[RMDB]
RNA sequence: GGGAACGACUCGAGUAGAGUCGAAAAGAUCAGGGUUACAAGUGACGGAUUCGUCCUUCGUUGGCGUGAUAUUAUAGGGGACAAUGGACGUCAGUGUAACAUCACGGCUUGUGCUCUUUACGGUGGUUCUUUUUUCAUGAUUCGUCAUGAAAGAGGGAAAAGAAACAACAACAACAAC
Reactivity to 2A3 in 0.01 (KOAc 150mM, MgCl2 10mM, bicine 150mM(pH8.5), 24C), signal-to-noise 9, nucleotides 027 to 126: g090a080u160c080a040g040g020g030u100u210a010c010a010a080g050u020g120a090c010g010g020a050u090u080c080g020u040c040c010u060u140c030g080u050u070g050g000c030g020u070g070a060u020a040u150u130a100u130a070g070g010g010g010a010c040a040a070u090g050g070a010c010g010u010c010a020g020u010g020u050a020a020c010a020u030c010a010c010g010g000c000u030u020g020u060g030c000u000c000u020u080u060a070c080g050g020u060g030g000u070
Reactivity to DMS in 0.01 (KOAc 150mM, MgCl2 10mM, bicine 150mM(pH8.5), 24C), signal-to-noise 9, nucleotides 027 to 126: g000a070u020c090a170g000g000g000u000u010a010c020a020a040g020u010g010a020c020g000g000a080u010u020c160g010u000c010c020u010u020c090g020u010u010g010g010c060g010u010g010a090u020a080u020u020a080u020a120g010g000g000g000a030c030a060a080u020g010g010a160c050g010u000c010a040g010u000g000u000a010a020c030a040u030c040a170c040g000g010c010u000u010g000u020g010c010u000c010u000u010u010a090c150g010g010u000g000g010u010